[RMDB]
An RNA of 177 nucleotides, treated with DMS and 2A3 and read out base by base.
For 2A3, 1,555 sequencing reads were counted.
For DMS, 2,942 sequencing reads were counted.
The RNA was probed in 150 mM KOAc, 10 mM MgCl2 and 150 mM bicine (pH 8.5) at 24 C.
DMS adducts were read by reverse transcription with MarathonRT.

RNA sequence: GGGAACGACUCGAGUAGAGUCGAAAAUAACGUACUUUCGAGUACGUUAAGUCUCCCGGCGCUAGCAGGGCUCAAGAGAAGAUGGAGGAGCUGGUGGUGGAAUUAGGGGGGGAUUCGUCCCCCCCAAGAAGUCUCAGAAAUUCGUUUCUGAGACUUCAAAAGAAACAACAACAACAAC
Reactivity to DMS in 0.01 (KOAc 150mM, MgCl2 10mM, bicine 150mM(pH8.5), 24C), signal-to-noise 3, nucleotides 027 to 126: u000a010a020c000g000u000a010c010u000u000u010c150g000a000g030u000a010c000g010u010u000a000a070g010u000c160u000c010c020c020g010g020c080g030c050u010a040g000c070a090g020g000g010c070u010c050a070a070g000a110g000a060a080g000a100u010g010g000a100g010g010a110g010c050u000g000g020u000g010g010u000g000g010a090a070u000u010a110g010g020g000g000g030g000g020a020u000u000c160g000u000c000c000c000c000c000c000c000a000a020
Reactivity to 2A3 in 0.01 (KOAc 150mM, MgCl2 10mM, bicine 150mM(pH8.5), 24C), signal-to-noise 1, nucleotides 027 to 126: u020a000a000c000g000u000a000c010u050u010u030c170g030a000g000u000a010c000g010u000u000a000a010g050u040c010u020c060c010c010g040g040c040g000c060u050a030g020c020a040g070g100g000c000u020c070a100a090g050a020g020a140a040g030a060u120g000g060a040g030g010a030g080c050u020g050g040u060g020g150u050g010g030a150a120u130u070a300g000g000g020g000g030g010g010a010u000u000c000g010u000c020c000c010c020c010c010c000a000a000